[RMDB]
RNA sequence: GGGAACGACUCGAGUAGAGUCGAAAAAUUGCUUGGGAUGCAUUCUGAUGCGAGUGCUCUUGUGUUCGUUGAAUGGCUUGACCACGGAGAGGCACUUGCAGACGCGCUUGACGCUCCAUUCGUUAGUGGUGAAAUGCCACAUUAUCGACGAGAUCAACAAUUGAGACUACUUCGGUAGUCUCAAUUGAAAAGAAACAACAACAACAAC
Reactivity to DMS in 0.01 (KOAc 150mM, MgCl2 10mM, bicine 150mM(pH8.5), 24C), signal-to-noise 2, nucleotides 027 to 156: a100u010u000g000c020u000u010g010g000g020a140u000g020c020a140u010u000c010u000g010a180u010g010c040g020a050g020u010g000c030u000c040u000u000g020u010g020u000u010c050g020u000u010g020a100a130u010g000g020c100u000u010g010a130c040c010a060c010g000g010a180g010a070g010g010c000a020c020u000u010g020c020a070g000a090c080g020c030g020c000u000u000g010a110c050g000c000u000c020c010a190u010u000c040g010u000u010a080g020u010g000g010u010g020a050a090a120u010g030c020c000a020c000a090u010u010a040u000c020g030a060c060g000a120g010a080u010c030a090a160
Reactivity to 2A3 in 0.01 (KOAc 150mM, MgCl2 10mM, bicine 150mM(pH8.5), 24C), signal-to-noise 6, nucleotides 027 to 156: a000u090u090g010c030u040u030g040g000g080a040u070g010c020a030u050u070c040u160g090a110u050g000c020g000a000g000u010g010c010u000c010u080u040g010u000g010u040u060c060g030u050u120g120a180a170u180g090g060c120u170u230g020a050c000c030a020c050g060g020a010g000a030g090g050c010a000c010u000u010g000c000a010g010a030c070g020c000g000c050u020u080g020a060c050g020c020u030c040c020a100u070u040c020g040u040u060a050g000u010g030g020u030g070a140a050a090u210g000c010c000a010c000a030u090u110a090u090c030g010a020c020g010a010g030a090u150c020a000a090

The record gives the reactivity of an RNA of 207 nucleotides to DMS and 2A3. Values cover nucleotides 27 to 156. The 2A3 profile rests on 3,954 reads. The DMS profile rests on 7,299 reads.